[RMDB]
RNA sequence: GGGAACGACUCGAGUAGAGUCGAAAAGAUUAGCCACACAUUAUUCCAGAUGCACAAGAUGUACAACUUCCGCCAAUUACUCCUGCAAAUAACAUCACUAUUGUAGAACCUAAGAUUGGUCUUUUGAGAUGUCUUUUCUGGUUUUUUGCAUCUGAUGAUGUUUGUAGAGGUUCGCCUCUACAAACAUAAAAGAAACAACAACAACAAC
Reactivity to 2A3 in 0.01 (KOAc 150mM, MgCl2 10mM, bicine 150mM(pH8.5), 24C), signal-to-noise 4, nucleotides 027 to 156: g050a070u100u180a040g050c070c020a080c010a010c020a100u040u100a070u250u100c040c010a010g000a030u020g020c030a030c030a100a040g010a070u060g020u090a070c010a090a070c100u090u040c010c030g020c030c020a040a030u060u050a100c030u040c040c000u000g010c020a010a080a100u100a110a060c050a040u140c020a030c100u120a060u100u040g030u030a020g010a070a030c010c030u050a140a050g020a110u020u040g020g030u040c040u090u100u100u090g060a120g010a040u030g000u020c020u070u080u060u010c040u050g000g000u020u050u010u020u070u060g000c000a000u000c010u020g010a080u100g020
Reactivity to DMS in 0.01 (KOAc 150mM, MgCl2 10mM, bicine 150mM(pH8.5), 24C), signal-to-noise 2, nucleotides 027 to 156: g010a210u000u000a090g030c050c030a120c130a050c060a100u000u010a120u010u000c050c040a110g020a090u000g040c000a090c090a040a130g020a250u000g000u010a090c030a070a100c050u000u000c040c070g000c010c030a060a130u000u000a050c030u000c010c010u000g000c070a030a060a110u000a070a120c080a060u010c130a130c080u000a120u000u010g010u010a040g010a030a030c070c030u000a060a130g020a060u000u000g010g000u000c050u000u000u000u000g000a080g030a020u000g010u000c020u000u000u000u000c060u000g010g000u000u000u000u000u000u000g020c010a030u000c010u000g020a110u000g010
The data come from the RNA Mapping Database (RMDB), library OK3TST. Chemical mapping of a 207-nucleotide RNA with 2A3 and DMS. The DMS profile rests on 3,711 reads. Values are in units of 0.01, from 0 to 300, in steps of 10. For DMS the reverse transcriptase was MarathonRT. The 2A3 profile rests on 2,289 reads.